Chemical mapping of a 207-nucleotide RNA with 2A3 and DMS.

RNA sequence: GGGAACGACUCGAGUAGAGUCGAAAAUUUUUGUAUGCUUUGUAGAGACGGGUUUCGCCAUGUCUCUCAGGCUGGUCUGAAACUCAGGCUCAAGUGAUCCGCCCUCCUCAGCCUCCAAAAGUGCCAGGAUUACAAGCGUGAGCCACUGCGCCUGGCAGCAUAUUAGGUGAUUCGUCACCUAAUAUGCAAAAGAAACAACAACAACAAC
Reactivity to 2A3 in 0.01 (KOAc 150mM, MgCl2 10mM, bicine 150mM(pH8.5), 24C), signal-to-noise 3, nucleotides 027 to 156: u100u080u010u030u060g090u080a150u140g050c050u140u210u110g090u190a020g000a010g010a020c040g000g010g000u050u240u240c070g000c020c060a160u170g000u010c000u000c010u000c040a000g000g000c000u010g010g030u070c100u090g020a110a050a030c020u010c040a040g020g000c010u010c040a120a040g040u030g050a030u040c040c020g020c020c010c010u000c000c000u020c030a010g020c000c000u070c000c040a050a090a000a000g030u020g030c020c000a000g000g020a010u110u140a100c020a050a010g000c010g060u100g030a020g030c060c010a010c030u030g000c030g020c010c000u010g010g000c000a000
Reactivity to DMS in 0.01 (KOAc 150mM, MgCl2 10mM, bicine 150mM(pH8.5), 24C), signal-to-noise 2, nucleotides 027 to 156: u000u000u010u000u000g020u000a080u010g010c030u000u000u000g060u020a060g000a060g020a060c000g040g010g010u000u010u010c110g050c060c010a080u020g050u000c000u000c050u010c080a060g030g000c020u000g020g000u000c040u010g020a110a060a080c040u000c030a120g030g020c000u000c000a060a100g020u010g010a070u000c030c010g040c020c040c040u010c010c020u000c020a130g060c010c000u000c060c090a060a100a090a070g010u000g040c000c030a100g010g010a110u000u000a070c050a070a070g010c030g030u000g000a090g020c000c030a060c060u020g000c140g000c010c010u000g000g040c050a190
The RNA was probed in 150 mM KOAc, 10 mM MgCl2 and 150 mM bicine (pH 8.5) at 24 C.